Structure probing data (2A3 and DMS) for a 177-nucleotide construct. The reactions ran in a buffer of 150 mM KOAc, 10 mM MgCl2 and 150 mM bicine (pH 8.5), at 24 C. For DMS, 4,805 sequencing reads were counted. It was measured as part of the RMDB library TTRDEL.
RNA sequence: GGGAACGACUCGAGUAGAGUCGAAAAGAUAUGGAUAAGCCUCGCUAACCUUUGAUCUCGGAAACGAGGGAGGUUAGAACUACGAGAAGCUUAUCCUAAGUCAAACUCUCCCGUUCGCGGGAGAGAACCUAUGAUAUCACUUCGGUGAUAUCAUAGGAAAAGAAACAACAACAACAAC
Reactivity to 2A3 in 0.01 (KOAc 150mM, MgCl2 10mM, bicine 150mM(pH8.5), 24C), signal-to-noise 4, nucleotides 027 to 126: g020a020u090a040u120g000g000a000u000a000a000g000c000c000u000c000g000c010u000a010a000c000c010u160u300u130g110a110u100c010u010c020g050g040a120a080a060c020g000a010g010g010g000a000g000g010u000u000a000g000a040a050c120u200a040c060g010a010g060a210a070g000c000u000u000a000u000c000c000u000a070a000g020u020c010a030a040a200c010u000c000u000c000c010c000g020u030u060c300g010c010g030g000g000a000g000a000g000a000a000
Reactivity to DMS in 0.01 (KOAc 150mM, MgCl2 10mM, bicine 150mM(pH8.5), 24C), signal-to-noise 4, nucleotides 027 to 126: g010a030u000a300u020g000g010a010u000a000a010g020c000c000u000c000g000c020u000a010a000c000c000u000u000u010g000a060u000c000u000c000g000g000a130a090a260c020g000a010g010g000g010a010g000g010u010u000a010g000a050a020c120u020a300c020g000a010g010a080a060g020c000u000u000a000u000c000c000u000a000a090g010u010c040a110a130a190c000u000c000u000c000c000c000g020u000u010c190g030c010g000g000g000a010g010a000g000a020a080